[RMDB]
RNA sequence: GGGAACGACUCGAGUAGAGUCGAAAACGUAAAGUGCGAGCUUUUGUCCGGAAUGGUUCCGCCGUGAUCGGGCCAUGCAAUAGUUGCCAACGACAACUAUGCUCCGGUUGCUCAGGCAGCGUAACGCACAAUGGAACAACCUUCGGGUUGUUCCAAACCGGUUAAACAGGUUCGCCUGUUUAACCGGAAAAGAAACAACAACAACAAC
Reactivity to 2A3 in 0.01 (KOAc 150mM, MgCl2 10mM, bicine 150mM(pH8.5), 24C), signal-to-noise 2, nucleotides 027 to 156: c030g050u100a060a050a070g000u000g010c010g000a050g000c020u070u020u090u110g060u040c010c020g030g040a060a110u090g030g000u300u280c020c040g030c050c080g150u180g040a110u150c010g000g010g010c000c000a010u030g000c000a010a300u000a000g010u000u020g030c040c070a090a000c080g090a160c020a000a010c020u000a000u040g010c010u000c000c000g000g040u090u120g010c020u030c070a010g020g010c020a020g060c020g070u080a100a020c010g020c020a020c020a060a110u050g010g000a000a000c000a010a000c020c040u030u090c210g020g010g000u000u010g000u000u000c000c000a000a000a000
Reactivity to DMS in 0.01 (KOAc 150mM, MgCl2 10mM, bicine 150mM(pH8.5), 24C), signal-to-noise 1, nucleotides 027 to 156: c020g030u020a060a040a110g000u000g000c000g000a300g000c040u000u000u000u000g000u000c030c010g020g030a080a060u000g030g020u010u010c010c000g010c150c100g000u020g000a130u010c000g000g000g000c000c020a040u010g000c050a090a020u000a020g060u010u000g040c000c010a100a190c220g010a110c000a000a010c000u010a010u000g000c040u000c020c040g000g020u000u000g000c020u030c130a080g000g010c020a040g000c040g000u000a070a110c050g030c010a020c040a110a300u020g000g010a050a000c020a020a010c000c000u000u000c300g030g030g040u010u000g000u000u000c010c000a000a020a060